[RMDB]
RNA sequence: GGGAACGACUCGAGUAGAGUCGAAAAUCACAGUUCGCUGUGAACCAAUCCUAAGUCAUCGGGAGUAGAGAGAGACGAAGAACACACUCGGAAACGAGUGUGGGAGUCUUGACUCUACAUCGAUCGAUGAUAUGGACCGCUAGAGAUUCGUCUCUAAUAUCAUCCAAGAAUUCGUUCUUGGAUGAUAAAAAGAAACAACAACAACAAC
Reactivity to 2A3 in 0.01 (KOAc 150mM, MgCl2 10mM, bicine 150mM(pH8.5), 24C), signal-to-noise 7, nucleotides 027 to 156: u040c000a000c000a010g040u100u120c190g050c140u000g000u010g010a010a010c020c020a030a080u040c000c000u080a170a050g020u010c000a000u000c010g030g050g000a070g010u010a000g000a000g030a000g000a000g000a000c020g100a220a020g020a080a010c000a000c000a000c000u000c000g000g050a080a070a040c010g000a000g000u000g000u000g000g000g000a010g010u000c000u000u140g120a300c000u000c000u010a010c000a080u030c010g070a100u060c010g000a010u000g000a000u010a040u060g010g000a050c060c080g050c150u080a020g010a010g010a070u040u130c190g090u010c080u000c000u020a060a050
Reactivity to DMS in 0.01 (KOAc 150mM, MgCl2 10mM, bicine 150mM(pH8.5), 24C), signal-to-noise 4, nucleotides 027 to 156: u010c010a020c020a040g030u000u020c200g020c030u000g010u020g020a050a210c060c060a120a100u020c010c010u000a080a290g010u000c010a040u000c010g000g010g010a150g030u000a030g010a010g040a300g000a020g000a010c020g020a120a070g030a110a200c000a000c010a000c000u000c010g000g020a130a150a160c010g010a010g010u000g030u010g010g000g000a220g030u000c000u000u010g000a170c020u000c000u000a020c010a090u000c040g010a040u000c030g010a040u000g000a040u000a300u010g020g000a050c030c060g000c050u000a120g000a050g010a130u000u000c110g000u000c000u010c010u010a050a300